[RMDB]
RNA sequence: GGGAACGACUCGAGUAGAGUCGAAAAUAGCAAAGAUUGCCAUCAAGAAUAUUAGUAAAGGAUUACCUGUUCUUAAACUAAUAUCCACACCAUGUUUUGGUUUAUCAGGAAUAGGAUCUGGAUUAUCGGACCGGUAAUUAUUCGUAAUUACCGGUCCAAAAGAAACAACAACAACAAC
Reactivity to DMS in 0.01 (KOAc 150mM, MgCl2 10mM, bicine 150mM(pH8.5), 24C), signal-to-noise 3, nucleotides 027 to 126: u040a060g020c080a070a120a090g020a080u000u010g000c010c020a050u030c080a070a080g010a050a040u000a000u000u020a010g010u000a080a030a060g000g000a050u010u030a090c170c120u020g010u000u010c010u000u000a050a060a050c020u000a010a020u000a030u000c030c060a130c170a110c100c030a080u020g030u040u000u000u000g000g000u000u030u030a020u010c150a070g040g000a090a060u010a060g010g000a080u000c010u000g020g000a300u000u020a040u020c160
Reactivity to 2A3 in 0.01 (KOAc 150mM, MgCl2 10mM, bicine 150mM(pH8.5), 24C), signal-to-noise 4, nucleotides 027 to 126: u090a030g060c030a050a040a060g090a130u050u130g030c020c020a070u100c080a150a060g060a150a030u160a060u270u090a060g040u100a040a050a030g040g000a010u040u130a130c010c030u050g010u010u000c010u040u040a040a050a000c010u040a030a030u040a020u120c020c010a090c020a030c080c070a110u110g080u040u110u030u010g030g000u000u050u030a120u100c090a050g000g130a040a100u070a080g000g030a030u020c030u090g070g090a050u090u090a100u190c090